[RMDB]
RNA sequence: GGGAACGACUCGAGUAGAGUCGAAAAGAUAUGGACAACCACGGUGGACAUGCUCGGAGGUCGGAAACGACCUCGCGAGCAACAGCCAUUGGUUGUCCUAAGUCAAACGGCAACUUCGGUUGCCGAAGUGACGUAUAUGGUUCGCCAUAUACGUCACAAAAGAAACAACAACAACAAC
Reactivity to DMS in 0.01 (KOAc 150mM, MgCl2 10mM, bicine 150mM(pH8.5), 24C), signal-to-noise 5, nucleotides 027 to 126: g000a020u000a240u020g000g000a030c000a010a000c000c000a080c300g010g000u000g000g000a110c230a100u000g040c000u000c010g000g000a010g000g030u000c010g000g000a020a020a030c000g010a000c000c000u000c000g000c000g020a010g030c000a020a020c150a300g000c000c000a060u000u020g000g020u000u000g010u000c010c000u000a000a050g010u000c010a140a100a160c020g000g000c000a010a030c010u000u050c160g020g010u000u000g030c000c000g010a010a040
Reactivity to 2A3 in 0.01 (KOAc 150mM, MgCl2 10mM, bicine 150mM(pH8.5), 24C), signal-to-noise 3, nucleotides 027 to 126: g020a000u030a010u070g010g000a010c010a010a000c010c020a030c180g140g010u050g020g070a100c110a300u300g020c010u000c020g020g010a010g000g020u010c020g000g030a040a030a020c020g000a000c020c020u000c010g070c000g020a010g040c010a010a010c010a020g000c000c010a030u080u110g000g000u000u010g000u000c000c000u000a010a000g010u000c030a000a070a110c030g000g000c010a030a000c000u080u100c300g160g010u030u010g010c000c010g010a030a010

An RNA of 177 nucleotides, treated with DMS and 2A3 and read out base by base. The reactions ran in a buffer of 150 mM KOAc, 10 mM MgCl2 and 150 mM bicine (pH 8.5), at 24 C. For DMS the reverse transcriptase was MarathonRT. For 2A3 the reverse transcriptase was SuperScript II with manganese. The 2A3 profile rests on 12,281 reads.